[RMDB]
RNA sequence: GGGAACGACUCGAGUAGAGUCGAAAAUUCAAUAGUACUCUCCCUGAGUGUGGGUAUUGCUGUCACGCUGUUGAGCUCUGGGCUUAUCCAGGCGGAUAUAGACAGCUAUCUGUUUGGCAGCAUACUGACGUCCCAUACCAUUCGUGGUAUGGGACGUAAAAGAAACAACAACAACAAC
Reactivity to 2A3 in 0.01 (KOAc 150mM, MgCl2 10mM, bicine 150mM(pH8.5), 24C), signal-to-noise 2, nucleotides 027 to 126: u120u020c060a130a190u180a200g020u060a040c070u050c000u000c020c020c000u180g010a010g010u170g000u080g030g070g000u020a010u020u270g020c000u000g000u000c000a000c060g000c020u040g070u110u270g000a020g000c010u040c000u240g000g150g010c050u240u060a070u030c010c020a090g220g000c120g030g030a090u140a000u000a150g100a000c020a100g000c050u050a030u130c060u000g180u020u080u030g000g000c000a000g040c000a030u000a000c020u010g020
Reactivity to DMS in 0.01 (KOAc 150mM, MgCl2 10mM, bicine 150mM(pH8.5), 24C), signal-to-noise 1, nucleotides 027 to 126: u010u070c090a110a050u020a100g000u000a050c060u000c060u000c020c000c020u010g000a070g000u000g030u010g000g040g020u000a020u000u040g020c000u000g100u010c000a060c120g000c020u000g000u000u010g000a110g000c040u070c090u050g010g000g000c190u000u010a040u010c000c030a100g000g060c110g000g030a110u060a050u010a050g000a060c060a000g010c050u000a010u020c070u000g000u070u000u000g000g000c000a000g000c000a000u000a010c010u000g010